[RMDB]
Structure probing data (DMS and 2A3) for a 177-nucleotide construct.
The DMS profile rests on 6,491 reads.
Reactivities are given for positions 27 through 126.
The 2A3 profile rests on 3,545 reads.
The reactions ran in a buffer of 150 mM KOAc, 10 mM MgCl2 and 150 mM bicine (pH 8.5), at 24 C.
DMS adducts were read by reverse transcription with MarathonRT.
2A3 adducts were read by reverse transcription with SuperScript II with manganese.
RNA sequence: GGGAACGACUCGAGUAGAGUCGAAAACCGCACUUCUUCGGAAGUGCGGAAAUACCGAGAUUGUACCUCGGUAGAAGUACAUAACGCUUGGAAACAAGGGAAAAAGCGUGAGCUUCGGCUCACGCAACAAAUAAGGACUCUUCGGAGUCCUUAUUUGAAAAGAAACAACAACAACAAC
Reactivity to DMS in 0.01 (KOAc 150mM, MgCl2 10mM, bicine 150mM(pH8.5), 24C), signal-to-noise 5, nucleotides 027 to 126: c000c010g020c000a000c000u000u000c000u000u010c200g030g000a020a000g030u000g020c000g000g000a000a030a060u000a060c010c000g000a030g000a090u010u010g000u000a250c080c010u000c000g010g010u000a010g000a060a080g020u010a070c130a070u000a070a140c100g000c020u000u000g000g000a150a100a170c010a010a020g000g010g010a060a060a080a120a100g010c000g000u000g000a010g010c010u000u010c230g020g000c000u000c000a010c000g010c000a030a030
Reactivity to 2A3 in 0.01 (KOAc 150mM, MgCl2 10mM, bicine 150mM(pH8.5), 24C), signal-to-noise 3, nucleotides 027 to 126: c000c000g030c010a020c000u000u020c010u020u050c090g130g010a000a000g000u010g000c000g000g010a010a010a000u020a000c000c000g000a000g000a030u160u200g060u190a140c010c000u000c000g000g000u030a020g010a080a000g040u090a030c050a110u140a180a060c080g010c170u010u010g010g020a020a040a030c000a000a040g050g040g010a050a120a010a060a060g000c010g000u000g000a000g000c010u080u120c290g080g000c000u000c010a000c000g000c010a010a000
It was measured as part of the RMDB library M2PK50.